[RMDB]
Structure probing data (DMS and 2A3) for a 177-nucleotide construct. It was measured as part of the RMDB library OK1LIB. The RNA was probed in 150 mM KOAc, 10 mM MgCl2 and 150 mM bicine (pH 8.5) at 24 C.

RNA sequence: GGGAACGACUCGAGUAGAGUCGAAAAGAAAAAGAUAGCUGGAUGUGAAGGUUAAGAAGAACCGCAAGACAACAGCAAGAAAUGCUCACAAACGAAAGUGCGCAAACAAUUGCGGUUCAAAAGAAAAACGAUCACCAUAGUUCGCUAUGGUGAUCGUAAAAGAAACAACAACAACAAC
Reactivity to DMS in 0.01 (KOAc 150mM, MgCl2 10mM, bicine 150mM(pH8.5), 24C), signal-to-noise 2, nucleotides 027 to 126: g000a030a140a000a040a210g010a120u090a210g020c040u000g000g040a070u000g060u000g030a080a190g000g000u000u050a030a220g010a060a180g000a000a000c080c000g000c010a050a020g030a080c200a000a040c110a050g010c110a000a020g050a100a160a050u010g000c000u070c000a000c020a090a080a180c300g020a060a000a000g000u000g000c070g000c000a100a090a050c080a000a110u000u000g010c060g000g000u000u110c000a000a050a080a160g050a000a000a120a090
Reactivity to 2A3 in 0.01 (KOAc 150mM, MgCl2 10mM, bicine 150mM(pH8.5), 24C), signal-to-noise 1, nucleotides 027 to 126: g000a030a180a000a010a010g000a060u190a000g030c040u000g100g050a190u070g050u080g160a040a050g020g050u000u150a000a150g000a170a060g000a000a120c000c000g000c000a000a000g070a000c140a030a000c000a140g170c000a000a080g090a010a080a000u070g010c000u000c000a000c050a020a220a070c050g090a030a030a020g000u050g010c020g010c000a010a010a010c110a040a110u010u010g000c010g000g000u020u000c000a000a000a080a060g100a000a070a000a000